This 177-nucleotide RNA was probed chemically with DMS and 2A3. For DMS the reverse transcriptase was MarathonRT. 2A3 adducts were read by reverse transcription with SuperScript II with manganese. Source: RMDB library OK1LIB, as collected in RNAgym.
RNA sequence: GGGAACGACUCGAGUAGAGUCGAAAAUGCGGGUCCAGACGCCGCCGGCCUGCGUCCAGGUGGAGCCCUGGGCCGGCGUUGCGCCCGGCACGGCGAUGGUGUCCGCAACCGCAGCCGCGACAUCCGCGUUACCAGAGACUUUCGAGUCUCUGGUAACAAAAGAAACAACAACAACAAC
Reactivity to DMS in 0.01 (KOAc 150mM, MgCl2 10mM, bicine 150mM(pH8.5), 24C), signal-to-noise 1, nucleotides 027 to 126: u010g020c010g000g000g000u000c090c030a020g020a090c020g000c030c000g000c010c000g000g000c000c000u020g020c120g000u020c000c080a060g000g030u020g000g000a130g020c060c090c050u000g000g000g000c000c060g010g010c000g010u010u020g010c180g030c110c000c010g010g030c080a030c050g020g000c000g010a270u010g000g000u030g000u000c050c070g070c040a080a020c040c020g010c040a150g020c060c010g000c030g000a060c180a050u010c010c020g010c150
Reactivity to 2A3 in 0.01 (KOAc 150mM, MgCl2 10mM, bicine 150mM(pH8.5), 24C), signal-to-noise 4, nucleotides 027 to 126: u090g010c010g000g000g010u020c010c000a020g050a130c000g000c000c000g000c000c000g000g000c000c000u060g000c050g040u070c010c000a020g060g030u140g160g220a090g020c010c000c010u020g010g010g000c040c030g040g010c000g010u020u100g020c050g000c030c040c000g020g000c120a080c130g010g000c000g010a020u030g000g050u110g050u070c000c020g000c000a000a000c000c010g020c030a020g040c040c050g010c010g010a030c030a070u060c020c020g010c050